Source information
Structure probing data (2A3) for a 177-nucleotide construct. Conditions: 150 mM KOAc, 10 mM MgCl2 and 150 mM bicine (pH 8.5), 24 C. The 2A3 profile rests on 888 reads.
RNA sequence: GGGAACGACUCGAGUAGAGUCGAAAAACGGUCGUACGCGACCGAGGCGCGGCUAGGUCGACGGACCGAACAAUGGCAUCCCGCAUUCUGCCAUCCGCCGCGCAGCUUCUUCUCAAACGGUGCGGAACUCGCACGCGUCUUUCGAGACGCGUGCGAGAAAAGAAACAACAACAACAAC
Reactivity to 2A3 in 0.01 (KOAc 150mM, MgCl2 10mM, bicine 150mM(pH8.5), 24C), signal-to-noise 2, nucleotides 027 to 126: a000c000g000g000u000c000g010u060a010c300g000c000g130a000c000c000g000a110g000g000c000g000c000g000g000c010u000a000g000g020u000c020g100a180c300g060g060a000c010c000g040a010a000c000a000a000u000g000g000c000a050u100c010c000c000g000c010a080u300u170c060u010g000c000c020a020u010c030c030g010c000c010g000c010g000c000a010g020c010u050u030c010u050u020c010u000c000a080a090a040c090g060g000u000g000c000g050g000a010a010
Reactivities are given for positions 27 through 126.